Conditions: 150 mM KOAc, 10 mM MgCl2 and 150 mM bicine (pH 8.5), 24 C. The record gives the reactivity of an RNA of 177 nucleotides to DMS and 2A3.
RNA sequence: GGGAACGACUCGAGUAGAGUCGAAAAAGUUCCCUUGGCUCAUAGUCUGUGCUAGAGUAAUAGCUGCUCUUUUCCUCUGCAUUGGAAGGAAUAUCUAUCCUUUUAUAUGUAUUCAGAAGGGCUGCACAAUACUAAGUUGCUUCGGCAACUUAGUAUUAAAAGAAACAACAACAACAAC
Reactivity to DMS in 0.01 (KOAc 150mM, MgCl2 10mM, bicine 150mM(pH8.5), 24C), signal-to-noise 6, nucleotides 027 to 126: a150g010u000u000c000c000c000u010u010g000g020c000u000c050a100u010a060g020u010c150u020g010u020g000c030u000a030g000a080g010u010a110a100u030a110g000c020u000g000c010u000c000u010u000u010u000c090c070u000c160u000g000c010a010u000u000g000g010a010a010g000g000a060a130u020a130u040c260u040a120u010c010c000u000u010u000u000a020u020a010u000g000u000a030u030u010c200a070g010a030a020g000g010g000c020u010g000c010a140c180
Reactivity to 2A3 in 0.01 (KOAc 150mM, MgCl2 10mM, bicine 150mM(pH8.5), 24C), signal-to-noise 9, nucleotides 027 to 126: a000g020u010u010c000c000c000u010u080g070g000c010u010c040a160u040a050g080u040c140u140g200u250g030c010u030a030g000a010g090u120a090a170u080a190g020c030u030g000c000u020c000u060u050u050u060c020c020u060c030u020g000c010a000u000u020g010g010a010a010g010g020a030a050u080a140u160c080u080a120u050c020c000u000u020u010u010a220u010a010u090g020u000a070u080u180c030a020g010a040a020g010g020g010c030u050g000c000a010c040